Annotation:
Structure probing data (2A3) for a 207-nucleotide construct.
RNA sequence: GGGAACGACUCGAGUAGAGUCGAAAAGUCUCCUAGAGAGCUUGGCCGUCGGGCCUUACACCCCGACUUGCUGAGUUUCUCUAGGAGAGUCCCUUUCCCAGCCAGAGGUGGCUGGUCAAUCAAUACCAAAACUCUUGCUAGUUCGCUAGCAAGAGAACGGUUAAUUCUUGUUCGCAAGAAUUAACCGAAAAGAAACAACAACAACAAC
Reactivity to 2A3 in 0.01 (KOAc 150mM, MgCl2 10mM, bicine 150mM(pH8.5), 24C), signal-to-noise 2, nucleotides 027 to 156: g030u000c000u010c000c000u000a000g000a000g000a000g020c000u010u010g010g000c010c000g000u000c000g000g030g010c000c020u060u120a090c060a050c010c010c000c010g020a010c030u070u240g000c000u000g000a000g000u030u300u050c000u000c010u000a000g000g000a000g000a000g000u010c000c000c000u010u090u010c000c010c010a000g040c000c010a030g010a070g090g110u020g010g010c000u000g000g090u030c030a010a080u000c000a000a050u010a100c020c000a020a050a100a210c000u000c000u000u000g000c000u000a020g030u040u040c150g070c110u000a000g010c000a000a000g000a000g000a010a010
For 2A3 the reverse transcriptase was SuperScript II with manganese. The 2A3 profile rests on 1,537 reads. Source: RMDB library M2RFPK, as collected in RNAgym.